[RMDB]
RNA sequence: GGGAACGACUCGAGUAGAGUCGAAAAUCUUUUCCUUUCCUCGUCCUCCCCGGUCAGCCUCCAGAGUUCCUCUUCUUCUUCCUUGCUGAGGCUCUUUCCCCCUGCGGAGAGCUGCUUCUUCUUGUUCACUUUACAGAACGUUCGCGUUCUGUAAAGUAAAAGAAACAACAACAACAAC
Reactivity to DMS in 0.01 (KOAc 150mM, MgCl2 10mM, bicine 150mM(pH8.5), 24C), signal-to-noise 2, nucleotides 027 to 126: u000c090u000u010u000u000c010c030u000u000u010c010c010u010c020g030u000c010c020u010c030c000c040c000g010g010u010c060a070g040c020c010u000c030c040a130g000a150g020u000u000c030c000u000c050u000u010c020u010u000c050u000u010c020c010u010u010g010c080u010g020a110g010g000c030u000c010u000u000u000c010c010c020c170c110u000g020c140g010g010a080g010a040g010c080u010g010c050u000u000c070u000u000c040u000u010g010u010u000c080

The record gives the reactivity of an RNA of 177 nucleotides to DMS. For DMS the reverse transcriptase was MarathonRT. The DMS profile rests on 2,122 reads. It was measured as part of the RMDB library 15KREP. The reactions ran in a buffer of 150 mM KOAc, 10 mM MgCl2 and 150 mM bicine (pH 8.5), at 24 C.